This 177-nucleotide RNA was probed chemically with DMS and 2A3.
2A3 adducts were read by reverse transcription with SuperScript II with manganese.
DMS adducts were read by reverse transcription with MarathonRT.
Values cover nucleotides 27 to 126.
[RMDB]
RNA sequence: GGGAACGACUCGAGUAGAGUCGAAAAGCUACAUUCGUGUAGCAACCGUUGAUGAUGAUACAGCCAGGACCCUGAUGGGAUGAUGAGUGGUGGGCUUAGCUGAUGGGAGGAUCCGGUUCGCCGGAAACGUUAUCCUAGCUUUCGAGCUAGGAUAACGAAAAGAAACAACAACAACAAC
Reactivity to DMS in 0.01 (KOAc 150mM, MgCl2 10mM, bicine 150mM(pH8.5), 24C), signal-to-noise 2, nucleotides 027 to 126: g000c000u000a000c010a010u000u000c190g060u000g000u000a000g010c010a050a100c000c020g000u010u000g020a090u000g000a110u020g030a090u010a060c130a080g020c020c040a050g000g010a070c060c020c050u010g030a150u000g040g000g000a090u030g020a080u000g010a120g020u020g000g030u000g020g000g000c070u000u010a040g020c050u020g000a130u030g010g000g000a140g000g000a100u000c000c010g000g020u000u000c170g010c010c020g010g000a040a040a080
Reactivity to 2A3 in 0.01 (KOAc 150mM, MgCl2 10mM, bicine 150mM(pH8.5), 24C), signal-to-noise 1, nucleotides 027 to 126: g000c010u010a000c010a040u030u120c170g080u030g000u010a000g000c010a020a040c000c020g030u040u130g030a150u040g000a030u030g020a040u070a170c020a000g050c030c000a030g020g030a110c010c000c000u070g100a110u160g020g070g020a040u070g010a020u060g000a020g060u070g000g070u060g020g010g000c020u040u000a000g010c010u040g010a070u050g030g100g000a050g020g000a030u020c000c000g000g030u030u020c090g000c020c000g030g000a030a030a010